RNA sequence: GGGAACGACUCGAGUAGAGUCGAAAAGGCUGAUCCGGCCACGGUUCGCCGUCGUCGACACCGCGGUGGGUGUGGACCUGGCCGCCCUGCGCGCCAAGAUCGUCGUCGCCGACACCGGCCGCGGCGCGGUGCAAUUCACUUUCGAGUGAAUUGCACCAAAAGAAACAACAACAACAAC
Reactivity to 2A3 in 0.01 (KOAc 150mM, MgCl2 10mM, bicine 150mM(pH8.5), 24C), signal-to-noise 2, nucleotides 027 to 126: g070g000c060u070g020a100u050c080c060g000g000c030c040a010c060g030g050u060u060c080g000c050c000g030u020c020g030u040c040g050a080c020a040c080c030g030c000g040g000u190g050g040g010u060g030u060g030g000a030c010c020u000g030g000c000c020g000c030c020c020u110g000c040g000c030g010c040c020a060a020g020a110u140c040g040u020c010g040u030c010g070c070c030g040a050c010a010c080c000g100g000c000c000g060c010g020g010c040g030c040
Reactivity to DMS in 0.01 (KOAc 150mM, MgCl2 10mM, bicine 150mM(pH8.5), 24C), signal-to-noise 2, nucleotides 027 to 126: g010g030c040u020g020a110u000c040c000g030g000c110c100a070c040g010g020u000u000c080g030c040c020g030u000c230g010u010c040g010a270c090a110c020c010g010c010g040g040u010g000g010g010u000g000u010g010g020a020c020c020u000g000g010c010c040g000c050c070c070u010g020c080g030c070g010c000c020a070a110g010a080u000c060g000u000c050g000u000c170g010c030c020g020a040c080a080c070c010g000g000c000c020g040c050g000g000c080g010c110